[RMDB]
RNA sequence: GGGAACGACUCGAGUAGAGUCGAAAAGGCGGAUCGCAUGAGGCUGGCUUCACAGAGCAAUGAACAGCUCCCGCUCUGUGCAGUGGAAGGUUAACGGGUCGGUGUCUACCAAGUCCAGUAAAGCUUGAUGGAUUGCUCCAAAUAAACCUCCACCUUUACUCUUACUUAUCUUCGGAUAAGUAAGAGUAAAAGAAACAACAACAACAAC
Reactivity to DMS in 0.01 (KOAc 150mM, MgCl2 10mM, bicine 150mM(pH8.5), 24C), signal-to-noise 2, nucleotides 027 to 156: g000g010c020g000g010a100u010c070g050c060a130u010g000a100g040g000c030u000g000g020c030u040u010c030a050c020a070g000a040g030c000a050a100u000g030a050a100c070a130g030c040u020c000c020c070g030c000u000c010u000g030u020g020c150a050g020u000g000g010a060a020g040g010u000u010a120a140c080g030g040g060u000c110g000g020u010g020u000c010u010a020c010c010a010a040g020u010c030c010a210g000u010a120a140a080g000c020u000u010g020a010u010g010g020a070u000u000g040c030u010c050c010a050a060a090u000a040a040a050c000c010u000c000c010a130c030c000u000u000u000
Reactivity to 2A3 in 0.01 (KOAc 150mM, MgCl2 10mM, bicine 150mM(pH8.5), 24C), signal-to-noise 7, nucleotides 027 to 156: g030g010c030g020g040a070u080c070g010c140a090u140g010a020g070g020c040u040g040g000c000u090u060c020a010c000a020g030a000g010c040a050a210u250g050a200a070c060a090g020c030u040c020c020c000g000c000u000c000u010g020u010g010c040a040g000u020g030g040a140a080g030g020u030u050a060a010c050g010g000g020u070c070g000g050u040g020u000c010u000a030c010c000a020a010g020u000c030c060a050g040u180a040a100a020g010c010u020u020g010a010u030g040g040a010u040u180g020c040u130c110c020a050a050a080u130a060a050a020c000c010u010c020c000a020c010c000u000u000u000
Structure probing data (DMS and 2A3) for a 207-nucleotide construct. The 2A3 profile rests on 7,203 reads. High DMS reactivity at an A or C suggests that its Watson-Crick edge is free. The data come from the RNA Mapping Database (RMDB), library ARCHII. The DMS profile rests on 4,010 reads.